[RMDB]
RNA sequence: GGGAACGACUCGAGUAGAGUCGAAAAGGUAAUGGACGACGGCGGCGUGUGGCUAACAGGGAUACCGGUAGUCAGUGUCUGGAACAUCCCAAGGGGCGGCGGAGCUAGCACCCCGACACGUUAAGGCAAAACUUCGCACGGUUCGCCGUGCGAAGAACUAGAGAGUAUAGUUCGCUAUACUCUCUAGAAAAGAAACAACAACAACAAC
Reactivity to DMS in 0.01 (KOAc 150mM, MgCl2 10mM, bicine 150mM(pH8.5), 24C), signal-to-noise 2, nucleotides 027 to 156: g030g020u000a120a050u000g010g000a100c030g020a070c050g010g010c050g040g010c050g040u000g040u000g000g000c050u010a060a130c050a130g000g020g010a140u000a110c050c020g000g020u010a080g030u000c070a100g030u000g000u010c000u000g010g010a080a110c060a100u000c000c050c010a120a100g020g010g010g020c010g040g020c030g000g010a100g040c040u020a100g000c020a070c030c010c000c020g000a030c040a030c110g020u000u000a080a080g020g040c050a030a050a060a060c010u000u000c010g000c010a010c000g030g000u000u010c300g020c030c000g020u020g000c020g000a000a020g020a040a090
Reactivity to 2A3 in 0.01 (KOAc 150mM, MgCl2 10mM, bicine 150mM(pH8.5), 24C), signal-to-noise 3, nucleotides 027 to 156: g070g010u080a100a060u090g020g020a020c010g010a000c020g020g020c000g010g010c020g010u070g020u030g010g030c040u030a060a040c060a100g020g010g030a040u070a120c010c020g030g040u050a030g100u050c080a010g020u040g040u090c050u070g020g010a040a040c020a070u030c000c010c030a040a060g000g010g000g000c080g000g010c050g040g040a050g050c040u010a030g020c030a060c010c020c000c010g020a030c040a010c070g090u090u070a080a010g050g000c050a070a010a060a060c030u010u000c000g000c000a000c000g010g000u030u030c180g000c100c000g000u010g000c000g000a000a010g000a000a000